[RMDB]
RNA sequence: GGGAACGACUCGAGUAGAGUCGAAAAUUAACAGUAGUGCCCUACCCUGUUUGCAUGUCCCUGCAAUGCCGGUGGAACAGAGUCGUGGGGAGCUCUUUUGGGUGGAGUAAUACAAACAGCGGUUAUGGAGUCAGUGAGUAUUCGUACUCACUGACUCAAAAGAAACAACAACAACAAC
Reactivity to 2A3 in 0.01 (KOAc 150mM, MgCl2 10mM, bicine 150mM(pH8.5), 24C), signal-to-noise 5, nucleotides 027 to 126: u050u040a010a030c040a060g120u150a010g010u110g180c020c000c000u030a030c020c020c000u000g010u010u040u040g060c070a050u090g030u110c020c010c010u000g020c020a030a080u110g050c030c030g150g000u100g070g060a070a050c030a040g070a040g140u140c050g010u040g000g030g000g000a000g010c000u010c000u060u200u180u170g150g020g030u110g030g020a090g000u060a040a040u110a120c040a040a040a000c010a010g030c080g060g050u030u050a130u240g150
Reactivity to DMS in 0.01 (KOAc 150mM, MgCl2 10mM, bicine 150mM(pH8.5), 24C), signal-to-noise 1, nucleotides 027 to 126: u000u040a050a030c190a100g020u010a010g020u060g000c020c020c000u000a080c020c010c000u010g000u000u000u000g000c170a010u010g000u000c030c000c000u030g000c020a060a090u010g000c040c100g000g060u010g030g050a160a080c110a030g030a130g000u000c140g010u000g010g000g020g020a070g000c010u020c010u000u020u010u020g000g020g030u070g050g000a000g000u020a100a100u030a080c020a020a000a050c010a010g000c160g000g000u000u020a120u000g000
This 177-nucleotide RNA was probed chemically with 2A3 and DMS. The reactions ran in a buffer of 150 mM KOAc, 10 mM MgCl2 and 150 mM bicine (pH 8.5), at 24 C. The data come from the RNA Mapping Database (RMDB), library OK1LIB.